[RMDB]
RNA sequence: GGGAACGACUCGAGUAGAGUCGAAAACGAGCUUAUUAAGCGUGUCGGAGGGUUGGCUCCGUCAUCAACACAUUUCGGUUAAAUAUAACUGACAAAUCAAACAAUAAUUUCGCAGUAGCUGCGUAAUAGCCACUGCAUCGCCUAACAGCAUCUCCUAUCAACCUCAUCUGUUCGCAGAUGAGGUUGAAAAAGAAACAACAACAACAAC
Reactivity to 2A3 in 0.01 (KOAc 150mM, MgCl2 10mM, bicine 150mM(pH8.5), 24C), signal-to-noise 2, nucleotides 027 to 156: c050g020a000g000c020u030u020a020u070u060a210a060g000c040g000u070g100u130c010g000g000a000g000g050g000u220u010g010g010c000u000c010c010g210u090c020a010u000c000a010a010c000a000c010a050u020u080u090c020g040g000u020u060a090a170a050u300a230u050a100a120c020u020g060a040c100a050a040a020u180c050a030a000a150c070a060a120u180a250a100u040u260u170c130g000c000a000g020u070a020g020c000u040g010c000g050u090a020a060u100a190g000c010c000a040c020u010g020c000a020u060c000g000c000c000u010a010a000c000a010g000c000a100u010c010u000c010c010u030a030